The data come from the RNA Mapping Database (RMDB), library 15KLIB.
The record gives the reactivity of an RNA of 170 nucleotides to 2A3 and DMS.
Reactivities are given for positions 27 through 129.
For DMS the reverse transcriptase was MarathonRT.
RNA sequence: GGGAACGACUCGAGUAGAGUCGAAAAGGCAAGUGGUAUGAUUUUGGUGACUUCGUAAUCACUCAACCUGGUUCAGGAGUAGCUAUAGUUGAUAGCUACUAUUCUUAUUUGAUGCCUGUGCUCUCAAUACCCCGCGUCUUCGGACGCGGGAAAAGAAACAACAACAACAAC
Reactivity to 2A3 in 0.01 (KOAc 150mM, MgCl2 10mM, bicine 150mM(pH8.5), 24C), signal-to-noise 3, nucleotides 027 to 129: g000g000c030a030a090g050u020g040g000u050a080u060g040a060u010u030u080u040g040g010u000g110a020c020u020u050c080g090u100a080a040u020c000a000c050u160c020a020a100c000c010u040g220g000u120u140c020a010g000g000a000g050u000a000g000c000u000a000u050a090g180u120u140g180a010u030a000g000c000u000a010c000u000a000u020u000c020u000u070a060u080u020u180g120a060u030g010c000c010u030g000u010g000c000u020c000u000c010a030a050u120a150c010
Reactivity to DMS in 0.01 (KOAc 150mM, MgCl2 10mM, bicine 150mM(pH8.5), 24C), signal-to-noise 3, nucleotides 027 to 129: g010g010c070a050a120g050u040g020g050u030a050u030g020a100u040u000u000u060g040g020u010g020a040c040u000u020c240g020u030a060a070u000c030a040c010u050c120a000a000c020c010u020g000g130u000u000c090a050g000g020a010g000u020a020g050c000u000a000u020a220g020u080u040g000a280u020a020g000c000u010a000c010u000a000u010u010c020u020u020a040u040u020u060g050a090u010g030c030c000u020g020u040g070c100u020c000u030c000a100a050u110a250c070